[RMDB]
RNA sequence: GGGAACGACUCGAGUAGAGUCGAAAAGAUGGGCACUACGACCAGGGCUCCGGCGUUGUUGAUUAGCAGGCUUGUGAGCUGGGUUGAUGAUCUUUGGUGCCGCGCUAUUGGGGCCGCAGUGUAGGCACACCAGUGACUGGUUCGCCAGUCACUGGUGAAAAGAAACAACAACAACAAC
Reactivity to DMS in 0.01 (KOAc 150mM, MgCl2 10mM, bicine 150mM(pH8.5), 24C), signal-to-noise 2, nucleotides 027 to 126: g000a090u000g010g010g020c000a000c020u010a080c050g000a010c010c000a070g000g010g010c000u000c000c020g000g020c000g000u050u020g010u010u010g000a150u040u080a100g000c060a080g010g000c000u000u030g060u020g000a010g000c010u010g010g020g010u000u000g000a170u030g000a050u010c020u000u020u010g020g010u000g000c000c010g000c090g030c020u000a080u000u030g000g000g000g010c050c020g030c100a030g000u000g020u010a100g010g000c060a130
Reactivity to 2A3 in 0.01 (KOAc 150mM, MgCl2 10mM, bicine 150mM(pH8.5), 24C), signal-to-noise 2, nucleotides 027 to 126: g150a010u120g000g030g000c000a030c040u050a030c140g030a010c010c010a050g000g060g000c020u030c000c010g040g000c090g030u060u000g020u040u030g100a300u130u160a070g030c000a000g060g040c030u140u300g090u150g140a000g000c000u030g040g000g000u000u030g010a100u070g050a080u140c080u110u080u110g010g030u000g000c000c000g010c000g010c020u090a060u150u120g000g010g030g000c000c040g020c050a080g040u010g050u090a170g000g040c030a020

An RNA of 177 nucleotides, treated with DMS and 2A3 and read out base by base.
For 2A3, 1,193 sequencing reads were counted.